Conditions: 150 mM KOAc, 10 mM MgCl2 and 150 mM bicine (pH 8.5), 24 C. Chemical mapping of a 207-nucleotide RNA with 2A3 and DMS. It was measured as part of the RMDB library M2RFPK.
RNA sequence: GGGAACGACUCGAGUAGAGUCGAAAAGCUUAAUAACCUGCGCUGAGCCCUUCUCCCCCAGCUUGCCUGUGUCCUAGGGAAUUGGAAGGUCAUCCUUCACAGGAUCGUGUGGAAGUCCUGAUCGGGGUCCAAACAUGGUAAUUCGUUACCAUGUUAAUUAAUCUUACCUGUUCGCAGGUAAGAUUAAAAAAGAAACAACAACAACAAC
Reactivity to 2A3 in 0.01 (KOAc 150mM, MgCl2 10mM, bicine 150mM(pH8.5), 24C), signal-to-noise 2, nucleotides 027 to 156: g000c020u120u230a020a040u140a190a230c000c010u140g010c060g050c090u010g010a050g100c020c000c010u040u060c100u060c000c010c010c010c010a010g000c000u040u090g060c000c000u040g000u010g000u090c010c020u040a040g040g070g000a090a110u100u170g030g010a040a000g020g040u090c010a150u090c000c020u020u020c030a030c010a070g000g020a040u050c030g070u040g070u050g120g050a010a080g030u070c010c000u000g000a000u040c040g000g010g000g000u030c020c000a000a040a000c000a000u000g000g000u030a060a000u050u070c120g030u020u000a000c000c000a000u000g000u000u000a000a000
Reactivity to DMS in 0.01 (KOAc 150mM, MgCl2 10mM, bicine 150mM(pH8.5), 24C), signal-to-noise 2, nucleotides 027 to 156: g020c020u010u010a060a060u010a080a120c030c020u000g020c060g010c040u000g020a120g010c040c000c020u020u000c050u000c020c010c010c000c030a090g020c050u000u000g040c020c020u000g000u010g030u000c050c050u000a140g000g040g010a050a130u000u000g010g010a090a040g010g010u000c060a100u010c010c010u000u000c030a090c030a040g000g000a060u010c060g040u000g000u000g020g010a110a100g010u000c020c080u000g000a060u000c040g010g020g050g020u000c030c030a040a030a010c000a000u000g000g010u000a010a080u000u000c250g000u000u010a010c010c000a020u000g010u000u000a030a160